Notes
An RNA of 177 nucleotides, treated with DMS and 2A3 and read out base by base.

[RMDB]
RNA sequence: GGGAACGACUCGAGUAGAGUCGAAAAAGUUAUCCCCCUCUUUAAAGGAGGCUGGUAACGCGUCGAUACAAGAGAUAUUGCUCUAUAAACAGUAACGUCGUUAUCUGUCAUGCCACCGAGGGUUAGCAGUGCUGUAUUGGUUCGCCAAUACAGCACUAAAAGAAACAACAACAACAAC
Reactivity to DMS in 0.01 (KOAc 150mM, MgCl2 10mM, bicine 150mM(pH8.5), 24C), signal-to-noise 3, nucleotides 027 to 126: a130g000u010u030a080u030c010c020c040c000c010u000c020u000u020u060a070a080a090g010g000a060g000g010c040u010g000g000u000a020a020c000g000c110g010u010c090g000a160u010a040c130a090a000g010a000g000a200u000a160u020u030g000c010u000c000u000a050u010a080a090a110c160a110g010u020a070a000c000g010u060c020g030u000u000a000u000c020u000g000u000c040a110u030g000c000c010a070c140c110g000a040g020g000g000u030u010a050g040c130
Reactivity to 2A3 in 0.01 (KOAc 150mM, MgCl2 10mM, bicine 150mM(pH8.5), 24C), signal-to-noise 4, nucleotides 027 to 126: a000g140u130u100a180u160c000c000c000c000c000u000c010u030u130u150a040a100a040g050g020a010g000g000c000u000g000g010u000a000a000c000g010c000g010u050c020g040a040u030a190c060a100a000g020a000g030a010u050a190u280u290g180c010u000c000u030a120u150a170a130a020c060a020g050u100a040a000c020g030u070c000g020u150u000a000u020c000u000g060u020c020a060u210g070c000c000a060c010c050g000a020g000g030g020u040u060a030g040c110
2A3 adducts were read by reverse transcription with SuperScript II with manganese. The data come from the RNA Mapping Database (RMDB), libraries RFM100 and RFMREP. Conditions: 150 mM KOAc, 10 mM MgCl2 and 150 mM bicine (pH 8.5), 24 C. DMS adducts were read by reverse transcription with MarathonRT.